[RMDB]
RNA sequence: GGGAACGACUCGAGUAGAGUCGAAAAGAAGAUGCGAUUGGGACGGAACCAGUUUCUGUACGAUGCCUCGCCAGAGGAUGCGGAUGCUUCAUCGGGCUGCUCGGCAGACGAUGAGGCCAACCGCUCAGAUCCUAUCAUUAUUCGUAAUGAUAGGAUCAAAAGAAACAACAACAACAAC
Reactivity to DMS in 0.01 (KOAc 150mM, MgCl2 10mM, bicine 150mM(pH8.5), 24C), signal-to-noise 9, nucleotides 027 to 126: g010a110a100g010a070u000g010c040g000a070u000u000g010g010g010a050c040g010g000a050a060c050c140a140g010u000u000u000c020u000g010u000a060c090g010a070u010g000c020c030u000c020g010c070c080a170g000a080g000g000a060u000g010c000g000g010a280u000g000c000u000u000c000a010u000c000g010g000g010c000u000g000c010u020c230g020g010c000a010g000a070c000g000a010u000g000a010g000g000c020c170a040a040c000c000g010c010u000c120a110
Reactivity to 2A3 in 0.01 (KOAc 150mM, MgCl2 10mM, bicine 150mM(pH8.5), 24C), signal-to-noise 9, nucleotides 027 to 126: g060a030a020g040a030u080g020c070g060a050u040u110g060g030g080a020c030g010g010a030a020c030c030a050g010u020u030u000c020u030g030u020a030c030g030a050u110g030c000c010u010c020g040c040c010a060g040a050g100g030a050u140g000c000g010g010a030u080g000c000u010u000c000a000u000c000g060g300g030c020u010g000c070u100c200g270g000c010a000g000a010c000g000a000u000g000a000g000g000c000c010a040a060c000c000g000c000u010c010a010